[RMDB]
RNA sequence: GGGAACGACUCGAGUAGAGUCGAAAAAUUCCUUCAUUGGCAGAAAAAAUCGAAAACGGUAGCAUUCAAAAUGAAAACAUCCGAAAGCGAAGCGAUAAUAAUUGGGGAGAACGUGUGAAUAAUAUGCGGGCAACCCGCGUGCCUUCUGAUUCCCCCACUCUUCUUGUAAGUUCGCUUACAAGAAGAGAAAAGAAACAACAACAACAAC
Reactivity to 2A3 in 0.01 (KOAc 150mM, MgCl2 10mM, bicine 150mM(pH8.5), 24C), signal-to-noise 3, nucleotides 027 to 156: a000u040u000c020c000u070u060c050a100u050u100g060g010c070a030g060a040a150a040a010a010a040u060c040g020a060a080a000a060c040g020g020u040a010g020c020a010u050u060c060a130a120a110a100u150g070a070a070a010a020c020a070u060c050c020g060a160a030a000g030c030g030a040a010g050c030g050a010u030a150a040u090a060a050u210u090g010g020g000g000a190g010a070a020c030g050u030g020u020g070a020a010u110a080a030u050a040u120g010c020g000g010g010c090a130a080c000c010c010g000c030g010u010g020c010c000u060u110c030u050g060a180u020u050c000c000c000c000c000a010
Reactivity to DMS in 0.01 (KOAc 150mM, MgCl2 10mM, bicine 150mM(pH8.5), 24C), signal-to-noise 2, nucleotides 027 to 156: a160u000u000c000c000u000u010c050a100u000u020g000g050c040a090g000a000a050a130a100a130a080u010c060g010a120a100a090a150c080g040g010u010a120g030c050a100u000u000c080a080a140a140a060u010g000a090a050a080a060c050a070u000c000c030g040a080a090a090g010c060g000a080a060g000c050g010a100u000a030a100u020a060a080u040u000g000g000g000g030a100g000a070a040c050g000u000g040u000g000a070a100u010a050a090u010a040u000g010c000g010g030g040c190a090a140c070c000c000g000c040g050u010g000c020c030u000u000c030u000g010a270u000u010c000c000c000c000c000a120
The record gives the reactivity of an RNA of 207 nucleotides to 2A3 and DMS. The 2A3 profile rests on 1,490 reads.